[RMDB]
RNA sequence: GGGAACGACUCGAGUAGAGUCGAAAAUGACGUCGUUUCGACGACGUCAACAUAAAAUCAGCGGUAAAUAAUUAGGAGGCGUUACGGCUGAACGCCUCCAUACGAGAGGGCUAUUCGUAGCCCUCAAGACUGUAUAGCCUUUCGAGGCUAUACAGUCAAAAGAAACAACAACAACAAC
Reactivity to DMS in 0.01 (KOAc 150mM, MgCl2 10mM, bicine 150mM(pH8.5), 24C), signal-to-noise 3, nucleotides 027 to 126: u000g010a000c000g020u000c000g010u010u000u010c210g030a030c000g020a010c020g010u010c000a030a070c140a110u020a090a090a060a070u000c010a020g010c030g020g020u000a030a040a050u000a040a090u020u000a130g000g010a010g000g010c000g010u000u000a060c160g020g000c020u000g000a020a040c010g000c000c000u000c000c000a010u000a000c230g000a190g000a010g000g000g000c000u000a010u000u010c220g010u000a000g000c000c000c000u000c000a010a060
Reactivity to 2A3 in 0.01 (KOAc 150mM, MgCl2 10mM, bicine 150mM(pH8.5), 24C), signal-to-noise 3, nucleotides 027 to 126: u050g000a000c000g000u000c000g010u020u070u110c220g080a020c010g030a000c010g000u000c000a000a000c010a010u190a010a110a020a080u040c010a000g040c040g180g110u070a040a060a070u100a040a120u160u210a140g000g000a000g000g020c000g000u010u050a040c060g110g000c020u010g000a000a010c010g020c010c010u000c010c010a000u030a010c020g030a040g000a000g010g000g000c000u010a010u020u070c120g050u010a000g000c000c000c000u010c000a000a000
The data come from the RNA Mapping Database (RMDB), library M2PK50. This 177-nucleotide RNA was probed chemically with DMS and 2A3. For 2A3, 4,381 sequencing reads were counted. DMS adducts were read by reverse transcription with MarathonRT. For DMS, 2,578 sequencing reads were counted. The RNA was probed in 150 mM KOAc, 10 mM MgCl2 and 150 mM bicine (pH 8.5) at 24 C. Values cover nucleotides 27 to 126. 2A3 adducts were read by reverse transcription with SuperScript II with manganese. In probing experiments dimethyl sulfate is read out at A N1 and C N3, which are open when not base-paired.